Structure probing data (2A3) for a 207-nucleotide construct. 2A3 adducts were read by reverse transcription with SuperScript II with manganese.

RNA sequence: GGGAACGACUCGAGUAGAGUCGAAAAAGAUGCUAGUAAUUUAUAAGGAAAGGAGGUUUAUUUCACUCAUGGUUCUGCAGACUGUACAAGAAGAAUGGUGCUGGCAUCUGCUUGGCUUAUGGUGGAGUUCUCAUGUGGCUUCCACUCAUGAUGGACAUCAGCGCAGUAGGUUCGCCUACUGCGCUGAAAAAGAAACAACAACAACAAC
Reactivity to 2A3 in 0.01 (KOAc 150mM, MgCl2 10mM, bicine 150mM(pH8.5), 24C), signal-to-noise 1, nucleotides 027 to 156: a070g010a000u070g040c000u000a000g000u040a160a250u240u170u290a230u030a110a050g060g000a000a060a000g040g010a060g060g060u100u300u020a070u010u270u130c070a040c060u060c000a000u070g040g080u080u040c040u120g030c040a000g010a100c060u030g000u060a150c070a100a050g080a100a010g070a080a030u250g000g010u060g020c000u030g060g010c010a010u000c000u000g030c000u070u040g000g000c060u260u070a030u030g130g000u040g010g000a000g010u190u000c080u000c070a060u210g080u120g060g030c060u100u150c070c000a010c010u060c030a010u100g000a060u080g030g030a080c000a190